An RNA of 177 nucleotides, treated with 2A3 and DMS and read out base by base. Conditions: 150 mM KOAc, 10 mM MgCl2 and 150 mM bicine (pH 8.5), 24 C.
RNA sequence: GGGAACGACUCGAGUAGAGUCGAAAAGACAUUAUAUGCCCAACUGAAAAGCAAUUGAUGCCAGAGUUUAGGAUCUCAACUGAACUAGGGACGGUCCGGCAUCCUCACACACAAGUUGAGGAUAAUACCAUAUCGAUUUAUUCGUAAAUCGAUAUGGAAAAGAAACAACAACAACAAC
Reactivity to 2A3 in 0.01 (KOAc 150mM, MgCl2 10mM, bicine 150mM(pH8.5), 24C), signal-to-noise 9, nucleotides 027 to 126: g030a010c020a040u160u170a110u130a050u300g020c000c000c000a020a030c050u110g040a080a090a070a020g030c030a040a140u160u170g040a040u100g050c010c010a040g010a040g100u040u090u110a060g020g030a060u020c030u040c100a030a120c020u030g050a070a040c040u040a100g020g000g030a020c030g010g020u010c010c000g000g030c010a010u000c000c010u010c000a040c000a000c000a010c020a080a100g030u080u030g030a010g000g010a010u040a030a040u060a040
Reactivity to DMS in 0.01 (KOAc 150mM, MgCl2 10mM, bicine 150mM(pH8.5), 24C), signal-to-noise 9, nucleotides 027 to 126: g010a120c080a040u010u010a080u010a170u010g000c010c010c030a130a130c130u010g000a070a080a130a140g000c070a060a150u000u010g010a070u000g010c000c010a110g010a060g010u000u000u000a040g010g010a090u010c080u010c140a100a150c030u000g000a030a040c070u000a070g010g000g010a100c130g010g000u000c020c130g010g000c120a050u000c000c010u010c010a020c100a110c170a110c300a090a080g010u010u000g010a020g000g020a020u000a060a090u000a140